[RMDB]
RNA sequence: GGGAACGACUCGAGUAGAGUCGAAAAAUGCCGCAUUCAGCGACGGUUACUCUAGUGGGCUACUGUCUAUCUAGCGUUGACAUCUACAUACUAUAUAGUAAUACCAAUACUCAAGACUACGAAACGGACCCAUAUCCACUUUCGAGUGGAUAUGGGUAAAAGAAACAACAACAACAAC
Reactivity to 2A3 in 0.01 (KOAc 150mM, MgCl2 10mM, bicine 150mM(pH8.5), 24C), signal-to-noise 5, nucleotides 027 to 126: a000u120g050c010c000g030c010a020u090u140c090a060g010c020g050a050c020g080g010u060u060a030c000u020c020u040a040g050u090g030g020g000c010u110a070c040u180g020u020c010u010a060u010c030u010a040g000c000g030u030u080g030a030c010a040u060c020u060a030c030a060u050a050c010u040a040u050a070u080a260g050u050a030a050u030a110c040c010a050a060u030a060c040u040c070a040a100g030a080c060u070a000c180g140a060a050a010c040g040g020
Reactivity to DMS in 0.01 (KOAc 150mM, MgCl2 10mM, bicine 150mM(pH8.5), 24C), signal-to-noise 2, nucleotides 027 to 126: a030u020g010c040c000g010c030a140u050u000c160a080g030c100g000a070c030g000g000u000u000a080c080u000c050u000a100g010u000g020g030g000c020u010a050c160u070g020u020c010u000a080u030c010u000a070g000c040g000u000u000g000a050c060a150u000c040u040a010c020a050u010a120c050u000a070u030a080u050a070g070u000a040a070u020a110c020c050a100a080u060a120c110u010c090a050a020g000a060c010u000a110c050g000a050a090a040c080g010g010
Structure probing data (2A3 and DMS) for a 177-nucleotide construct. Conditions: 150 mM KOAc, 10 mM MgCl2 and 150 mM bicine (pH 8.5), 24 C. 2A3 is a SHAPE reagent: it acylates the 2'-hydroxyl of flexible nucleotides of all four kinds. It was measured as part of the RMDB library OK1LIB. Values cover nucleotides 27 to 126. For 2A3, 3,850 sequencing reads were counted.